RNA sequence: GGGAACGACUCGAGUAGAGUCGAAAAUGGCGCACGGGUGAGUAAGGUAUAGUUAAUCUGCCCUACACUGGGGGACAACACUUAGAAAUGAGUGCUAAUACCCCAUACUCCUACCUAACAUAAGUUAAGAUCAUUCCAUGUUCGCAUGGAAUGAUCUAAAAGAAACAACAACAACAAC
Reactivity to DMS in 0.01 (KOAc 150mM, MgCl2 10mM, bicine 150mM(pH8.5), 24C), signal-to-noise 3, nucleotides 027 to 126: u030g010g000c040g000c060a020c130g010g000g000u040g010a180g010u060a020a090g000g050u000a040u010a050g010u040u050a050a160u000c050u010g000c000c000c020u000a030c120a120c150u020g010g000g000g000g030a150c280a210a090c020a010c030u000u000a010g000a080a020a240u000g010a000g000u000g000c050u000a110a130u020a140c010c020c010c000a110u000a050c100u020c010c010u000a150c070c010u020a030a080c150a080u020a060a120g030u040u020a120
Reactivity to 2A3 in 0.01 (KOAc 150mM, MgCl2 10mM, bicine 150mM(pH8.5), 24C), signal-to-noise 4, nucleotides 027 to 126: u110g060g000c040g020c030a010c050g010g020g010u060g010a060g010u030a080a000g080g040u060a070u130a120g080u120u050a050a080u040c030u040g090c000c000c000u040a040c080a010c040u030g000g000g000g000g010a010c050a030a010c010a010c000u010u020a010g060a070a120a080u080g010a000g000u020g000c020u000a080a000u060a130c000c000c000c020a010u050a010c020u030c000c000u040a050c010c010u020a080a030c030a150u160a150a040g080u140u110a050

Chemical mapping of a 177-nucleotide RNA with DMS and 2A3.
The reactions ran in a buffer of 150 mM KOAc, 10 mM MgCl2 and 150 mM bicine (pH 8.5), at 24 C.
It was measured as part of the RMDB libraries RFM100 and RFMREP.